[RMDB]
RNA sequence: GGGAACGACUCGAGUAGAGUCGAAAAACCCAGAACUCUCUCAGAAUCUAGGGAGAUCUCCCAGAUUCGAGAGAAAACUGGCUCUCCCUUAGCCAUCCGAGUGGACGUCUGUCCUCCUACGGAUGCCACACAAGCUAGUUCGCUAGCUUGAAAAGAAACAACAACAACAAC
Reactivity to 2A3 in 0.01 (KOAc 150mM, MgCl2 10mM, bicine 150mM(pH8.5), 24C), signal-to-noise 9, nucleotides 027 to 129: a000c010c000c000a010g010a020a040c020u010c000u000c000u000c030a100g000a010a000u000c010u220a260g000g050g000a060g040a130u140c160u020c150c000c000a000g000a000u000u000c000g000a000g000a000g000a020a020a000a010c000u000g000g000c010u010c010u010c030c010c000u040u100a030g040c040c010a010u000c000c000g020a030g010u010g000g010a010c010g170u140c250u300g010u010c010c000u020c010c020u040a080c010g000g000a000u000g000c020c000a080c010a000
Reactivity to DMS in 0.01 (KOAc 150mM, MgCl2 10mM, bicine 150mM(pH8.5), 24C), signal-to-noise 9, nucleotides 027 to 129: a060c270c000c000a000g000a100a220c140u010c000u000c020u010c020a110g000a010a000u030c010u020a130g020g020g010a030g030a140u080c160u030c050c010c000a020g000a050u000u000c000g020a010g000a000g040a010a010a050a100c000u010g000g000c100u020c070u000c000c010c010u020u050a060g020c150c000a010u000c020c000g010a080g030u030g020g020a010c000g060u080c190u100g010u020c000c000u000c090c020u030a070c010g010g000a020u020g000c060c130a090c140a130